Source information: Chemical mapping of a 177-nucleotide RNA with 2A3. For 2A3 the reverse transcriptase was SuperScript II with manganese. Values cover nucleotides 27 to 126.
[RMDB]
RNA sequence: GGGAACGACUCGAGUAGAGUCGAAAAAGGUCACCGCACGGAAACUGGAGAGACCCACGCAGCAGCAACUCGGUUGUAUCCCAUACAUUUGCCUGCUGAUCUGCACCAUAGCUCCAAACCAAACGGCAUCCUGGUCACACUUCGGUGUGACCAGGAUAAAAGAAACAACAACAACAAC
Reactivity to 2A3 in 0.01 (KOAc 150mM, MgCl2 10mM, bicine 150mM(pH8.5), 24C), signal-to-noise 2, nucleotides 027 to 126: a030g140g000u050c020a020c090c020g000c030a060c140g060g070a120a040a130c070u040g040g000a010g020a000g030a090c030c030c010a030c010g060c000a030g000c000a000g010c000a090a000c010u000c060g040g000u030u060g000u020a210u110c000c010c000a000u120a050c080a050u130u130u080g070c000c010u010g000c000u000g030a140u010c000u020g000c020a020c040c000a030u110a070g050c010u020c000c000a040a140a150c020c020a130a010a000c000g060g020c020